[RMDB]
An RNA of 177 nucleotides, treated with 2A3 and DMS and read out base by base. For DMS, 13,246 sequencing reads were counted.
RNA sequence: GGGAACGACUCGAGUAGAGUCGAAAAUUAGCAGCAAUGCACACCAGGCUGACUGCCUUAGCAGUGUGGCCCUUUAUUGUGGCAUCCUAAGGAGGGAUUCUGGAGUGCCUUUCGCGUGAAGCAUGCCCAUAGGAGUGGUGUUCGCACCACUCCUAUGAAAAGAAACAACAACAACAAC
Reactivity to 2A3 in 0.01 (KOAc 150mM, MgCl2 10mM, bicine 150mM(pH8.5), 24C), signal-to-noise 9, nucleotides 027 to 126: u060u040a030g020c080a000g010c010a010a030u050g000c010a000c000a020c000c000a010g020g010c030u070g080a160c020u180g110c010c010u020u030a010g000c110a070g060u150g110u160g300g080c020c000c020u150u180u090a300u300u200g050u190g020g000c000a010u020c000c000u010a020a010g030g010a030g010g020g020a030u130u010c000u010g000g010a040g010u010g010c000c000u030u070u100c110g010c020g020u060g030a050a010g010c030a030u110g030c000c000
Reactivity to DMS in 0.01 (KOAc 150mM, MgCl2 10mM, bicine 150mM(pH8.5), 24C), signal-to-noise 5, nucleotides 027 to 126: u030u010a140g020c020a110g020c060a040a040u010g000c010a020c020a110c000c010a020g000g000c070u010g010a160c010u020g000c000c040u000u000a010g020c170a140g000u040g040u050g010g000c000c000c020u000u010u080a160u050u000g000u030g010g010c000a030u010c020c010u010a030a030g010g000a080g010g000g000a130u000u000c010u010g000g000a110g010u000g010c000c100u000u010u010c120g010c040g000u020g000a100a090g010c100a090u020g000c000c020
Notes:
The RNA was probed in 150 mM KOAc, 10 mM MgCl2 and 150 mM bicine (pH 8.5) at 24 C. The 2A3 profile rests on 12,987 reads.